[RMDB]
RNA sequence: GGGAACGACUCGAGUAGAGUCGAAAAGAUCUGUUUCGCACACAAGCCUACGAAGUCGCCAGUAGGCUUGGUCUUCGGAGUCAUACUCUUCGAAGUAUGGCCGGUCGACUUCGUGUGCAGAUCGAAAGGGUGAGACGUCGUUCGCGGUGUCUCACCCAAAAGAAACAACAACAACAAC
Reactivity to 2A3 in 0.01 (KOAc 150mM, MgCl2 10mM, bicine 150mM(pH8.5), 24C), signal-to-noise 9, nucleotides 027 to 126: g010a010u010c010u020g030u040u180u210c080g010c010a020c000a010c010a040a030g040c000c000u020a020c010g070a070a020g060u060c040g040c080c020a070g060u090a060g050g010c010u000u000g000g010u000c000u000u000c000g070g010a080g030u030c030a060u040a120c030u030c020u150u200c100g010a020a010g000u010a020u030g020g000c010c010g080g020u100c030g010a000c000u060u050c090g000u010g000u020g000c000a010g000a000u000c000g020a100a050a040
Reactivity to DMS in 0.01 (KOAc 150mM, MgCl2 10mM, bicine 150mM(pH8.5), 24C), signal-to-noise 5, nucleotides 027 to 126: g010a010u000c020u000g010u010u020u010c070g000c010a020c030a190c080a070a070g000c000c010u000a020c010g010a100a080g000u010c060g020c050c040a210g010u020a050g000g000c000u000u000g000g010u000c000u000u000c000g000g000a130g010u020c100a070u020a090c080u010c010u030u020c180g000a070a000g010u010a020u000g000g020c010c000g010g000u030c060g010a000c000u010u020c090g000u010g000u000g010c000a050g000a000u000c020g010a100a140a110
This 177-nucleotide RNA was probed chemically with 2A3 and DMS. Values cover nucleotides 27 to 126. The RNA was probed in 150 mM KOAc, 10 mM MgCl2 and 150 mM bicine (pH 8.5) at 24 C.